Source: RMDB library OK1LIB, as collected in RNAgym. Structure probing data (2A3 and DMS) for a 177-nucleotide construct. For DMS, 1,871 sequencing reads were counted. For 2A3, 833 sequencing reads were counted.

[RMDB]
RNA sequence: GGGAACGACUCGAGUAGAGUCGAAAAGAAAGAAACGCGCGAAAAGAAAGAGUAUCUAGAUUCUAAUAAUAAUGAAUCUUGAGAGUGGUCGAUAGAUACGAAAAAGCGCGGAGACCACUGAAAGAAAGGGUAGUAUAAUCUUCGGAUUAUACUACCCAAAAGAAACAACAACAACAAC
Reactivity to 2A3 in 0.01 (KOAc 150mM, MgCl2 10mM, bicine 150mM(pH8.5), 24C), signal-to-noise 1, nucleotides 027 to 126: g030a000a070a000g090a030a240a010c020g010c010g000c000g010a000a060a110a000g140a030a160a030g040a000g000u030a000u000c000u020a020g000a030u090u000c050u050a050a030u110a300a130u170a110a140u240g000a050a030u060c060u080u160g030a040g000a000g030u010g000g000u000c000g000a000u000a110g020a010u030a000c010g040a160a000a080a050a000g000c000g000c000g000g000a000g000a000c000c000a000c000u020g070a100a100a060g170a030a100a000
Reactivity to DMS in 0.01 (KOAc 150mM, MgCl2 10mM, bicine 150mM(pH8.5), 24C), signal-to-noise 2, nucleotides 027 to 126: g000a030a040a100g000a140a160a120c020g000c010g000c000g010a060a040a110a140g020a130a190a220g020a220g000u000a000u000c000u000a020g000a010u010u000c010u000a080a070u060a140a120u030a060a050u060g000a020a000u000c000u000u050g010a090g010a060g000u000g010g020u000c010g000a070u020a020g010a010u000a000c010g030a040a060a080a160a260g010c000g070c000g010g000a130g000a000c000c000a020c000u010g040a180a100a030g000a080a050a160